RNA sequence: GGGAACGACUCGAGUAGAGUCGAAAACAUUACGAAUUCAGUCGCAAAUUGUAGAAUUAGCUACUCUACGAUUUAGUGAGCGUUAGUAACGUUGUAAUAUAAUAUAGUCUCUGGAAGGAUUAUAUUGGAGCCGCGGACAAGUUCGCUUGUCCGCGAACUCAAUGAGGGAGUUCGCUCCCUCAUUGAGAAAAGAAACAACAACAACAAC
Reactivity to 2A3 in 0.01 (KOAc 150mM, MgCl2 10mM, bicine 150mM(pH8.5), 24C), signal-to-noise 2, nucleotides 027 to 156: c010a040u090u110a010c020g050a050a110u150u100c040a090g080u010c020g000c010a020a000a010u000u000g000u000a000g010a050a040u060u010a050g040c040u070a010c010u000c000u000a000c000g020a000u030u010u090a050g000u020g000a060g070c030g050u070u060a030g020u050a080a030c030g010u030u000g030u040a180a100u110a120u000a200a000u000a000u000a010g000u000c050u010c030u180g210g060a100a060g050g000a030u000u030a000u020a000u010u030g040g070a080g140c080c010g090c000g020g000a000c000a000a000g030u050u110c100g040c100u000u000g020u000c000c000g000c010g000a000a010

Conditions: 150 mM KOAc, 10 mM MgCl2 and 150 mM bicine (pH 8.5), 24 C.
Structure probing data (2A3) for a 207-nucleotide construct.
Values cover nucleotides 27 to 156.
It was measured as part of the RMDB library M2RFPK.
The 2A3 profile rests on 903 reads.
As a SHAPE reagent, 2A3 marks flexible, mostly unpaired nucleotides at the ribose 2'-OH.